[RMDB]
RNA sequence: GGGAACGACUCGAGUAGAGUCGAAAAGCUGAAUGUCGGUACGUUAAUCGGUCACACCGCGCUGCGCAAUAACCAUAUGGACGAUCUGUUUCGUCCGGCGAACGAGACGGAAAUCGCCGGCAUGCGCCCUGGGUAGCUGAUUCGUCAGCUACCCAGGAAAAGAAACAACAACAACAAC
Reactivity to DMS in 0.01 (KOAc 150mM, MgCl2 10mM, bicine 150mM(pH8.5), 24C), signal-to-noise 3, nucleotides 027 to 126: g000c060u000g000a110a030u000g020u000c000g010g000u000a110c100g010u010u000a170a100u000c040g000g000u000c030a160c090a180c080c050g020c050g010c050u020g000c000g000c050a040a100u010a080a180c120c070a070u010a110u040g000g000a020c020g000a020u010c220u020g020u010u040u000c000g040u000c010c000g030g030c050g000a100a030c030g000a110g030a040c010g020g000a030a070a100u020c030g020c030c000g000g000c110a040u020g000c090g020c050
Reactivity to 2A3 in 0.01 (KOAc 150mM, MgCl2 10mM, bicine 150mM(pH8.5), 24C), signal-to-noise 5, nucleotides 027 to 126: g030c040u090g080a090a030u100g050u040c000g020g010u070a080c040g030u090u110a120a030u120c030g040g020u030c030a040c010a020c120c010g010c020g000c040u100g000c020g000c050a090a180u170a150a080c040c030a060u070a130u220g050g000a000c020g000a010u030c040u200g150u050u130u030c010g020u000c000c030g000g000c020g010a110a040c040g010a010g060a080c040g040g060a050a060a060u070c040g000c010c000g000g010c030a030u070g000c030g030c010